Structure probing data (DMS and 2A3) for a 177-nucleotide construct.
[RMDB]
RNA sequence: GGGAACGACUCGAGUAGAGUCGAAAAGAUUGUUCUCUGCAACUCGAGAGCAUGAAGCCGGAAUCGCUAGUAAUCGCAAAUCAGCCAUGUUGCGGUGAAUACGUUCCCGGGUCUUGUACUCACCGCCAAAAUCAACCACUUUCGAGUGGUUGAUUUUAAAAGAAACAACAACAACAAC
Reactivity to DMS in 0.01 (KOAc 150mM, MgCl2 10mM, bicine 150mM(pH8.5), 24C), signal-to-noise 4, nucleotides 027 to 126: g020a110u010u030g010u000u010c030u000c000u030g020c140a130a080c120u010c090g010a040g000a270g040c010a010u000g000a080a110g000c050c040g010g000a090a050u020c070g000c030u010a060g000u000a070a050u010c040g010c060a010a050a050u040c120a110g000c120c170a070u010g000u010u000g000c000g010g010u000g010a080a100u020a080c000g020u000u010c010c000c000g000g000g000u000c040u000u000g010u000a080c030u000c020a050c050c040g010c060c300
Reactivity to 2A3 in 0.01 (KOAc 150mM, MgCl2 10mM, bicine 150mM(pH8.5), 24C), signal-to-noise 5, nucleotides 027 to 126: g070a050u040u070g010u060u010c020u020c040u080g060c050a120a120c040u040c080g050a040g000a000g000c010a020u050g070a020a030g090c010c010g000g030a040a030u120c050g000c050u010a000g020u050a050a040u020c010g000c040a010a050a090u130c040a090g100c080c060a150u200g010u080u050g010c000g000g000u010g020a020a020u090a070c020g010u010u030c010c000c000g010g000g000u040c050u060u080g030u060a050c000u010c040a040c030c040g070c030c020

2A3 adducts were read by reverse transcription with SuperScript II with manganese.